Structure probing data (2A3 and DMS) for a 177-nucleotide construct. The data come from the RNA Mapping Database (RMDB), library VIROID. The DMS profile rests on 1,032 reads. Values cover nucleotides 27 to 126. The 2A3 profile rests on 6,076 reads. 2A3 adducts were read by reverse transcription with SuperScript II with manganese. The RNA was probed in 150 mM KOAc, 10 mM MgCl2 and 150 mM bicine (pH 8.5) at 24 C.

RNA sequence: GGGAACGACUCGAGUAGAGUCGAAAAGGAGCAUUGUUGAGCGGUCCAUGGGGAAACCUCCCUUCGUCCUUCGGCAUUGUGGUGCGUCGUGGGAAAGCGUGCCGCAUGGGGAAGCCGUGUACGAGGAGCUAUACAGGUUGUUCGCAACCUGUAUAGCAAAAGAAACAACAACAACAAC
Reactivity to 2A3 in 0.01 (KOAc 150mM, MgCl2 10mM, bicine 150mM(pH8.5), 24C), signal-to-noise 3, nucleotides 027 to 126: g050g010a040g010c070a060u040u100g100u090u110g070a030g020c040g010g040u000c050c030a070u060g010g000g000g040a040a050a070c010c030u030c010c010c000u040u040c020g010u010c020c000u110u140c020g030g000c050a130u020u070g020u030g020g020u010g010c000g010u010c020g020u020g010g030g000a010a010a000g030c020g010u010g000c030c010g000c010a010u050g010g010g040g080a040a050g010c000c010g020u010g010u020a010c020g010a030g030g030a060
Reactivity to DMS in 0.01 (KOAc 150mM, MgCl2 10mM, bicine 150mM(pH8.5), 24C), signal-to-noise 1, nucleotides 027 to 126: g010g020a070g020c040a160u020u030g010u000u010g010a120g040c080g020g000u000c010c090a070u030g000g010g010g000a030a130a120c080c070u000c040c020c000u030u000c020g030u000c010c090u000u000c020g010g010c030a110u000u000g060u000g000g020u000g020c060g010u000c030g080u000g010g000g000a200a180a050g000c040g000u000g020c000c000g000c000a020u000g000g040g000g000a160a090g000c020c010g020u000g000u000a000c070g000a060g020g000a160